The record gives the reactivity of an RNA of 177 nucleotides to DMS and 2A3. It was measured as part of the RMDB library OK2TST. DMS adducts were read by reverse transcription with MarathonRT. High 2A3 reactivity points to a flexible backbone, as in loops and unpaired stretches.

RNA sequence: GGGAACGACUCGAGUAGAGUCGAAAACGUAAAUUAUGAUUUAUUGCCGAUAAUUUAGAUUGACAAUCUGCUUUCAUAAUAUAAAUAGGAACAUGCUAUUAUCGCAUUCAUCCAUAACAAAUUAAGCUAUGCAAUCAUGUUUCGACAUGAUUGCAUAAAAAGAAACAACAACAACAAC
Reactivity to DMS in 0.01 (KOAc 150mM, MgCl2 10mM, bicine 150mM(pH8.5), 24C), signal-to-noise 2, nucleotides 027 to 126: c060g020u000a080a140a050u000u000a000u000g000a070u000u010u010a060u010u000g000c010c020g030a030u000a050a120u000u000u010a090g010a030u000u000g010a060c040a050a030u000c170u000g000c100u000u010u040c010a020u000a000a030u020a090u000a060a050a100u010a120g010g020a090a000c120a020u000g000c000u010a100u000u010a030u000c200g000c010a020u000u000c230a140u010c010c010a090u000a050a050c120a070a050a190u030u030a030a120g030c150
Reactivity to 2A3 in 0.01 (KOAc 150mM, MgCl2 10mM, bicine 150mM(pH8.5), 24C), signal-to-noise 2, nucleotides 027 to 126: c000g010u040a100a020a070u030u000a010u020g050a020u000u110u140a070u010u160g000c020c020g000a000u020a030a070u110u130u210a090g030a140u060u110g030a030c020a090a000u000c040u040g000c030u000u040u010c020a020u030a000a070u110a010u070a150a160a020u200a150g000g010a020a020c010a040u020g000c010u090a100u300u070a060u230c060g060c020a000u060u040c000a040u000c020c000a020u080a120a090c090a070a090a130u190u180a150a000g150c050